RNA sequence: GGGAACGACUCGAGUAGAGUCGAAAAGGAGUCUCGGGCCCCCUCCCAGGAAUGGAGACGGGGGGAAAUCGACCGGGUCCCGCAGAACCCGAUGGAGUCCCCCGCCAUCCCCUGACGGAGAAAACUGUAACGUAAGGAUUCGUCCUUACGAAAAGAAACAACAACAACAAC
Reactivity to DMS in 0.01 (KOAc 150mM, MgCl2 10mM, bicine 150mM(pH8.5), 24C), signal-to-noise 9, nucleotides 027 to 129: g010g000a050g010u030c050u030c060g030g000g030c030c000c010c060c010u020c000c000c000a000g000g050a080a070u050g020g020a080g010a080c070g000g000g030g000g030g010a010a030a070u020c020g030a060c050c000g000g010g000u000c010c050c140g050c140a110g000a110a030c000c000c000g010a000u020g010g000a060g000u020c000c000c000c000c000g010c000c040a080u030c040c050c000c000u000g020a130c140g020g010a020g030a080a060a060a080c100u040g000u020a130a160
Reactivity to 2A3 in 0.01 (KOAc 150mM, MgCl2 10mM, bicine 150mM(pH8.5), 24C), signal-to-noise 9, nucleotides 027 to 129: g020g000a020g030u030c030u020c060g020g030g010c000c000c000c010c010u010c000c010c000a000g040g040a080a120u240g010g000a040g010a040c020g000g000g010g010g000g010a010a020a070u040c010g030a020c020c000g000g010g010u030c070c040c030g030c020a040g040a060a010c000c000c000g000a030u050g040g020a010g050u050c000c000c000c000c000g000c010c000a110u010c020c000c000c000u040g000a040c100g020g020a020g000a030a050a010a030c100u120g050u190a120a030